[RMDB]
RNA sequence: GGGAACGACUCGAGUAGAGUCGAAAAGUAUCCCUAGAUGAUAAAACACCGCACAUGGCUCGUAAGAGCGGUUAAAUUAGCAAGUAAUGCAGAUUACGCGAGGUAACGCAUGGCCUAGGCUCGUUAGAAAAGGGAGAAUCCUUCGGGAUUCUCCCAACAAUUGUACCGGGUUCGCCCGGUACAAUUGAAAAGAAACAACAACAACAAC
Reactivity to DMS in 0.01 (KOAc 150mM, MgCl2 10mM, bicine 150mM(pH8.5), 24C), signal-to-noise 2, nucleotides 027 to 156: g000u010a160u000c000c000c020u000a110g000a100u000g040a170u000a070a100a150a150c070a090c030c020g020c050a170c110a050u010g000g000c060u000c070g000u020a100a080g010a070g010c000g000g040u010u000a050a060a200u000u000a040g030c100a080a120g010u010a070a090u000g020c020a110g000a160u000u000a040c050g010c100g000a140g010g000u000a040a030c080g010c030a070u010g010g000c030c030u010a080g040g050c020u010c080g000u000u000a100g030a050a110a080a180g010g020g000a050g010a030a000u000c000c010u000u020c300g000g020g000a020u000u000c010u000c050c000c000a010a000
Reactivity to 2A3 in 0.01 (KOAc 150mM, MgCl2 10mM, bicine 150mM(pH8.5), 24C), signal-to-noise 1, nucleotides 027 to 156: g040u020a110u080c020c000c000u010a000g070a180u160g000a050u190a140a080a000a070c020a000c040c000g000c020a000c040a180u050g100g000c010u010c050g040u070a080a000g000a000g070c030g000g000u070u020a050a070a040u040u040a010g030c060a050a000g010u150a100a070u060g060c020a010g070a190u000u120a030c030g000c090g090a010g170g020u020a040a010c040g020c050a030u050g060g110c000c020u010a010g060g000c020u000c060g090u000u040a070g060a070a100a030a020g000g000g000a000g000a000a000u000c000c000u000u120c190g000g000g000a000u000u020c010u000c000c000c000a000a000